Chemical mapping of a 177-nucleotide RNA with 2A3 and DMS.
RNA sequence: GGGAACGACUCGAGUAGAGUCGAAAAUGCCGACUAGGGAUCGGGCGAUGUUAUUAUUUUGACUCGCUCGGCACCUUACGAGAAAUCAAAGUCUUUGGGUUCUGGGGGGAGUAUGGUCGCAAGGCUGGACAUUACGUAAGUUCGCUUACGUAAUGUCAAAAGAAACAACAACAACAAC
Reactivity to 2A3 in 0.01 (KOAc 150mM, MgCl2 10mM, bicine 150mM(pH8.5), 24C), signal-to-noise 4, nucleotides 027 to 126: u060g040c010c010g020a080c050u050a010g000g030g010a030u030c000g000g010g020c020g000a040u200g060u060u030a060u100u050a220u020u300u080u100g000a000c010u000c020g000c000u000c000g000g010c000a070c000c000u000u030a030c020g020a010g090a140a070a040u180c080a110a060a060g100u010c050u060u100u100g050g000g000u110u080c040u070g040g000g030g010g010g000a020g030u060a060u140g030g010u030c000g010c050a030a050g020g000c000u020g030
Reactivity to DMS in 0.01 (KOAc 150mM, MgCl2 10mM, bicine 150mM(pH8.5), 24C), signal-to-noise 6, nucleotides 027 to 126: u010g020c040c030g010a150c120u000a030g010g010g010a070u000c000g000g000g010c000g010a030u010g010u000u000a030u000u020a200u010u010u010u000g010a010c000u000c010g010c010u000c010g010g000c300a030c010c000u000u000a070c210g000a100g000a080a080a080u000c100a040a080a120g010u000c040u000u000u000g010g000g000u000u010c070u000g000g010g010g000g000g000a070g010u010a060u010g000g010u000c020g010c130a080a120g010g010c060u000g010
The reactions ran in a buffer of 150 mM KOAc, 10 mM MgCl2 and 150 mM bicine (pH 8.5), at 24 C. Values cover nucleotides 27 to 126. It was measured as part of the RMDB library RFMREP.